About this RNA
Structure probing data (2A3 and DMS) for a 177-nucleotide construct. For DMS, 3,165 sequencing reads were counted. It was measured as part of the RMDB library TTRDEL.

[RMDB]
RNA sequence: GGGAACGACUCGAGUAGAGUCGAAAAGAUAUGGAACCAUGAACUACACCGUAGAGGCAUCGAUCUCGGAAACGAGGGAGCCUCGAGGGUGCAUGGUUCCUAAGUCAAACUGGCGUUCGCGCCAGAACGACAGAUUAUGGUUCGCCAUAAUCUGUCGAAAAGAAACAACAACAACAAC
Reactivity to 2A3 in 0.01 (KOAc 150mM, MgCl2 10mM, bicine 150mM(pH8.5), 24C), signal-to-noise 4, nucleotides 027 to 126: g030a030u100a030u160g010g000a010a000c010c010a000u010g000a060a100c110u190a040c300a010c000c010g040u070a020g010a000g010g000c010a150u300c100g080a100u000c010u000c010g020g060a070a020a020c000g000a000g020g020g010a010g000c000c010u010c010g000a010g000g000g000u010g010c000a000u000g000g000u000u000c000c000u000a000a000g000u000c010a000a080a130c000u010g020g000c010g030u070u060c300g000c000g000c150c000a010g000a030a020
Reactivity to DMS in 0.01 (KOAc 150mM, MgCl2 10mM, bicine 150mM(pH8.5), 24C), signal-to-noise 4, nucleotides 027 to 126: g010a040u000a300u010g000g000a020a010c000c000a010u010g000a070a030c110u030a300c020a020c000c000g000u000a300g000a010g010g010c010a250u000c230g000a060u010c000u000c000g010g010a140a080a150c010g000a020g000g000g000a020g030c000c000u000c010g000a150g000g000g000u000g020c000a000u000g000g000u010u000c000c000u000a000a070g000u000c020a070a070a190c000u010g010g000c010g040u000u020c170g020c000g000c000c000a000g000a070a060